Annotation: An RNA of 177 nucleotides, treated with 2A3 and DMS and read out base by base. The reactions ran in a buffer of 150 mM KOAc, 10 mM MgCl2 and 150 mM bicine (pH 8.5), at 24 C. For DMS, 1,845 sequencing reads were counted. The 2A3 profile rests on 6,752 reads. The data come from the RNA Mapping Database (RMDB), library OK1LIB.
[RMDB]
RNA sequence: GGGAACGACUCGAGUAGAGUCGAAAACAGUGUUAUAAAUCAAGCCUUGAUAUCAAAACAAGGUUCAUAUCUUACUAACCUAGUAAUAGAACAAGUAAAAAAUAGAUAUCAAUUUUUAAACCAACACCACCUAUUACUACUUCGGUAGUAAUAGGUGAAAAGAAACAACAACAACAAC
Reactivity to 2A3 in 0.01 (KOAc 150mM, MgCl2 10mM, bicine 150mM(pH8.5), 24C), signal-to-noise 8, nucleotides 027 to 126: c040a020g020u030g020u070u070a180u060a150a160a080u190c110a090a040g070c010c010u020u010g000a000u020a010u070c050a000a040a040a160c030a060a070g130g000u000u010c010a020u030a030u100c030u030u020a030c020u030a070a160c060c050u040a020g020u030a010a070u040a160g040a030a010c030a120a040g090u250a050a070a030a040a040a090u130a070g010a000u010a000u020c020a020a030u020u040u010u120u270a120a100a030c040c020a030a010c020a010c020
Reactivity to DMS in 0.01 (KOAc 150mM, MgCl2 10mM, bicine 150mM(pH8.5), 24C), signal-to-noise 2, nucleotides 027 to 126: c200a080g010u000g000u000u030a020u010a030a040a050u020c170a100a020g000c140c100u050u000g020a030u010a050u000c020a100a020a130a070c160a070a100g050g000u000u010c050a040u000a050u000c240u020u020a000c000u000a090a090c160c230u010a020g000u010a020a040u010a080g020a000a030c030a060a220g000u000a000a030a150a050a080a110u020a140g000a030u000a000u010c050a010a020u010u000u000u010u010a000a030a120c070c060a050a030c020a050c060